[RMDB]
RNA sequence: GGGAACGACUCGAGUAGAGUCGAAAAACGAGCGCGCCACUACGGUGGCCCGCUCGAUGGAAGUAGAGACCAGUAACUACUCAAAUAAACGGGUAUAACUAAAAAACCUUAAGAGUAAGGUGUAAAAAAUACGCGUUCUAGUUCGCUAGAACGCGAAGCUAAGGAAGGUGUUCGCACCUUCCUUAGCAAAAGAAACAACAACAACAAC
Reactivity to 2A3 in 0.01 (KOAc 150mM, MgCl2 10mM, bicine 150mM(pH8.5), 24C), signal-to-noise 1, nucleotides 027 to 156: a000c020g000a020g000c000g000c000g000c030c000a010c030u040a020c170g020g050u000g010g000c000c000c000g060c000u000c000g000a000u000g040g060a210a040g000u000a000g040a010g020a080c070c040a010g040u060a220a000c000u000a000c030u020c150a000a000a090u190a010a020a010c030g000g010g000u180a080u020a300a040c120u300a040a090a060a100a100a020c010c000u050u010a130a000g110a010g210u030a010a060g030g000u040g070u080a000a090a000a000a000a000u160a000c000g000c000g000u000u000c000u000a020g040u060u140c150g020c170u060a000g000a000a000c000g010c000g000a000a000

Record summary:
Source: RMDB library M2RFPK, as collected in RNAgym. This 207-nucleotide RNA was probed chemically with 2A3. For 2A3, 522 sequencing reads were counted. The RNA was probed in 150 mM KOAc, 10 mM MgCl2 and 150 mM bicine (pH 8.5) at 24 C.